[RMDB]
RNA sequence: GGGAACGACUCGAGUAGAGUCGAAAACAUAUGCAGUAGAAUGACCCAGCCUCUUUGGCUUAGAGGUAGUGCCUCCUUUUUACGACACUUGGAGCGGCAUCUGAUGCUCAUCACUUCAGUUGGAUAAGGAAUGCUGUCCAGUCACAGAGACUCAUGACCCACUGAUUCGAUUCGUCGAAUCAGUGGGAAAAGAAACAACAACAACAAC
Reactivity to 2A3 in 0.01 (KOAc 150mM, MgCl2 10mM, bicine 150mM(pH8.5), 24C), signal-to-noise 2, nucleotides 027 to 156: c080a000u170a030u190g070c060a030g050u130a050g080a180a090u140g110a130c000c010c000a000g030c000c000u100c020u120u050u130g020g000c000u030u060a000g010a030g070g020u060a050g000u040g050c010c060u020c030c010u000u010u040u040u260a150c140g050a030c060a010c060u080u110g050g060a080g020c030g060g020c010a010u020c090u180g030a050u050g050c030u030c170a110u100c070a100c050u040u020c040a030g020u050u050g060g060a090u020a060a010g030g010a030a060u090g020c000u000g040u020c020c010a000g020u030c020a030c010a030g080a000g000a040c050u080c050a040u240g100a190
Chemical mapping of a 207-nucleotide RNA with 2A3. Values cover nucleotides 27 to 156. For 2A3 the reverse transcriptase was SuperScript II with manganese. It was measured as part of the RMDB library OK3TST.